[RMDB]
RNA sequence: GGGAACGACUCGAGUAGAGUCGAAAAAAAAUCAGGUUCUCAGACAUGCACUUCCAUGUUGAUUGCAUUAUCCACAACAGCCAAGAUGUGGAGGCAACCUUGGUGUUCAUUAACGAAGGAGCGGUUAAAGAAAAGUGGAAUAUACAUGUAACGGAGAGUAGUAAAAUCGAUUCGUCGAUUUUACUACAAAAGAAACAACAACAACAAC
Reactivity to DMS in 0.01 (KOAc 150mM, MgCl2 10mM, bicine 150mM(pH8.5), 24C), signal-to-noise 3, nucleotides 027 to 156: a040a030a060a080u000c040a070g030g030u000u010c000u000c010a110g000a090c050a040u000g020c030a050c120u010u000c010c000a030u020g000u000u000g000a070u010u010g000c010a150u000u010a190u000c000c040a080c020a050a090c100a140g010c100c080a070a070g020a100u010g020u010g020g010a070g020g010c020a060a030c040c020u020u000g030g020u000g030u000u000c040a130u000u010a040a080c060g010a100a100g020g000a110g010c030g030g000u000u000a080a030a090g000a070a060a050a140g010u000g000g010a040a090u000a090u000a070c020a050u000g000u000a060a130c060g040g010a110g020a180
Reactivity to 2A3 in 0.01 (KOAc 150mM, MgCl2 10mM, bicine 150mM(pH8.5), 24C), signal-to-noise 8, nucleotides 027 to 156: a000a000a000a020u100c060a040g060g020u070u020c040u010c030a010g050a030c020a020u050g030c050a030c050u100u030c030c010a030u070g020u070u100g120a160u040u040g000c030a040u070u090a060u160c010c000a010c010a090a040c020a090g080c020c010a070a020g030a100u090g010u050g020g030a020g020g000c010a020a030c010c010u010u020g010g020u040g020u070u080c030a050u050u080a050a040c080g040a130a040g050g010a040g070c050g040g040u040u060a050a070a040g050a010a080a020a010g030u030g010g020a030a000u120a010u030a070c060a030u060g030u100a070a030c040g070g020a090g010a020

An RNA of 207 nucleotides, treated with DMS and 2A3 and read out base by base. It was measured as part of the RMDB library OK3TST. For DMS the reverse transcriptase was MarathonRT. For 2A3, 7,288 sequencing reads were counted. For 2A3 the reverse transcriptase was SuperScript II with manganese. The reactions ran in a buffer of 150 mM KOAc, 10 mM MgCl2 and 150 mM bicine (pH 8.5), at 24 C. The DMS profile rests on 5,821 reads.